The record gives the reactivity of an RNA of 177 nucleotides to DMS and 2A3. Source: RMDB library TTRDEL, as collected in RNAgym. The reactions ran in a buffer of 150 mM KOAc, 10 mM MgCl2 and 150 mM bicine (pH 8.5), at 24 C. For 2A3, 3,653 sequencing reads were counted.
RNA sequence: GGGAACGACUCGAGUAGAGUCGAAAAGAUAUGGAGAUGCGGAGGGAGCUGGUCGGAAACGACCCAGCGAGGAUCUCCCAUCUCCUAAGUCAAAAGAAUGUUCUCAUGUUCGCAUGAGAACAUUCAAGAAAUCAAAGAUCUUCGGAUCUUUGAUUUCAAAAGAAACAACAACAACAAC
Reactivity to DMS in 0.01 (KOAc 150mM, MgCl2 10mM, bicine 150mM(pH8.5), 24C), signal-to-noise 2, nucleotides 027 to 126: g010a050u010a300u020g000g010a010g000a000u010g020c170g020g000a030g010g000g010a030g040c000u000g010g010u000c000g000g010a130a060a190c010g010a020c130c060c060a000g000c000g000a050g000g000a010u000c000u000c000c010c010a000u000c000u010c000c000u000a010a080g010u000c020a080a080a130a150g000a010a000u000g000u000u000c000u000c000a000u000g000u010u030c200g010c010a020u000g000a000g000a000a000c000a010u000u000c000a080a090
Reactivity to 2A3 in 0.01 (KOAc 150mM, MgCl2 10mM, bicine 150mM(pH8.5), 24C), signal-to-noise 2, nucleotides 027 to 126: g010a000u080a050u190g010g000a000g010a000u020g010c210g100g000a000g000g000g000a020g000c010u010g000g000u010c030g010g040a070a070a080c020g000a030c150c300c030a000g010c020g040a230g000g000a010u000c000u000c020c000c000a000u030c010u010c000c000u000a000a000g030u010c040a010a040a000a150g000a000a000u000g000u000u000c000u020c000a000u000g050u070u080c300g000c150a010u020g010a000g000a000a000c000a000u000u010c000a000a010